[RMDB]
The record gives the reactivity of an RNA of 177 nucleotides to 2A3 and DMS. For DMS, 15,157 sequencing reads were counted. Reactivities are given for positions 27 through 126. 2A3 adducts were read by reverse transcription with SuperScript II with manganese.

RNA sequence: GGGAACGACUCGAGUAGAGUCGAAAAGGGCUGAGCACUUGGAUACGAUCCGGAAAGUAUCCUUGAUGCUUCGGCAUCUUGCAGUUUAUACGAUCCGGAAAGUAUAUACUGCUUGUGCUCUGCCCAAGGGAACGGCUACCUUCGGGUAGUUGUUCCCAAAAGAAACAACAACAACAAC
Reactivity to 2A3 in 0.01 (KOAc 150mM, MgCl2 10mM, bicine 150mM(pH8.5), 24C), signal-to-noise 9, nucleotides 027 to 126: g010g000g000c020u030g000a000g000c000a000c010u020u020g050g030a000u000a010c010g020a040u010c010c000g010g010a030a010a000g000u000a020u090c000c000u000u010g000a000u000g000c000u010u010c130g080g000c000a000u000c000u000u010g020c060a040g010u070u130u140a020u000a000c020g010a040u010c010c000g010g020a030a020a010g040u000a010u010a010u040a050c130u150g120c000u020u020g000u000g000c000u000c010u010g000c000c000c000a000a020
Reactivity to DMS in 0.01 (KOAc 150mM, MgCl2 10mM, bicine 150mM(pH8.5), 24C), signal-to-noise 6, nucleotides 027 to 126: g010g000g030c000u000g000a020g000c000a000c000u000u000g010g000a020u000a000c000g000a300u000c000c010g030g000a030a060a300g010u010a020u000c030c000u000u010g000a000u000g010c000u000u020c150g000g010c000a000u000c010u000u000g000c090a140g000u040u040u010a040u000a020c000g000a300u000c000c000g040g010a020a050a280g000u000a000u000a080u030a300c180u020g000c020u000u000g000u010g010c000u000c010u000g010c000c000c010a020a050
Conditions: 150 mM KOAc, 10 mM MgCl2 and 150 mM bicine (pH 8.5), 24 C.